[RMDB]
RNA sequence: GGGAACGACUCGAGUAGAGUCGAAAAGCUAUGUCGCCGAGCAGCUCGACGAACUUGGCGUGCCCUUCGAGAUGACUCGCCGGGGAACCAUCCGCGCGACCCUCCAGGGCCGCCUGAAUACCCCGGAAUGCAUUAGCAUCUUCGGAUGCUAAUGCAUAAAAGAAACAACAACAACAAC
Reactivity to DMS in 0.01 (KOAc 150mM, MgCl2 10mM, bicine 150mM(pH8.5), 24C), signal-to-noise 3, nucleotides 027 to 126: g030c060u000a060u010g000u010c020g040c050c020g010a030g050c200a130g020c130u000c000g020a050c030g000a070a060c090u000u000g010g000c020g020u010g010c020c000c020u000u020c090g000a050g010a220u000g010a080c090u000c000g010c010c010g010g000g000g000a130a130c230c120a070u010c020c010g010c180g000c020g000a030c080c060c010u000c110c170a100g000g000g020c010c020g000c000c000u000g000a110a100u010a170c060c000c000c040g020g000a150
Reactivity to 2A3 in 0.01 (KOAc 150mM, MgCl2 10mM, bicine 150mM(pH8.5), 24C), signal-to-noise 1, nucleotides 027 to 126: g010c010u050a020u230g070u080c020g000c060c030g030a030g040c050a030g040c030u030c030g020a020c010g010a110a060c020u060u080g010g010c020g030u060g000c020c010c000u020u040c040g010a040g000a060u110g070a090c000u000c010g000c050c010g040g030g000g030a060a030c080c010a110u030c010c000g080c000g000c000g050a010c000c000c010u000c040c030a000g010g030g010c000c000g000c010c010u010g000a020a020u070a070c020c010c030c020g040g030a080